Chemical mapping of a 177-nucleotide RNA with DMS and 2A3. The reactions ran in a buffer of 150 mM KOAc, 10 mM MgCl2 and 150 mM bicine (pH 8.5), at 24 C. Reactivities are given for positions 27 through 126.
[RMDB]
RNA sequence: GGGAACGACUCGAGUAGAGUCGAAAAAAUAUGCUCGACAGGCUGCCUGUCCGACAGAGCUUUUAGAUCUUCUGAUCUAUCCCUGCAGCAUAUCGCUUAUGCAUCAAGCGAUUGUCGGAUCACACAAUAAGAUUGAAAAAUUCGUUUUUCAAUCUUAAAAAGAAACAACAACAACAAC
Reactivity to DMS in 0.01 (KOAc 150mM, MgCl2 10mM, bicine 150mM(pH8.5), 24C), signal-to-noise 5, nucleotides 027 to 126: a070a040u000a020u000g010c010u000c020g010a100c160a090g000g000c030u000g010c030c250u000g010u000c010c010g000a020c020a070g010a050g010c050u000u000u000u000a010g000a010u000c010u010u010c300u010g010a010u000c000u000a030u000c010c010c010u010g010c040a030g000c010a050u010a030u000c020g010c010u000u000a080u010g020c230a120u010c150a030a020g010c000g000a020u000u000g000u000c010g000g010a150u010c160a090c140a070c170a060a120
Reactivity to 2A3 in 0.01 (KOAc 150mM, MgCl2 10mM, bicine 150mM(pH8.5), 24C), signal-to-noise 5, nucleotides 027 to 126: a000a000u120a030u050g000c010u020c020g050a060c060a060g090g000c010u020g020c000c050u110g090u030c010c000g000a000c010a010g030a010g010c000u030u040u010u010a000g000a000u000c020u240u040c160u300g010a010u000c000u010a030u000c010c000c000u020g020c000a010g000c000a020u020a010u110c010g000c020u050u030a080u250g140c050a100u130c090a030a010g000c000g010a010u010u020g000u000c000g010g020a050u080c060a060c010a020c020a120a090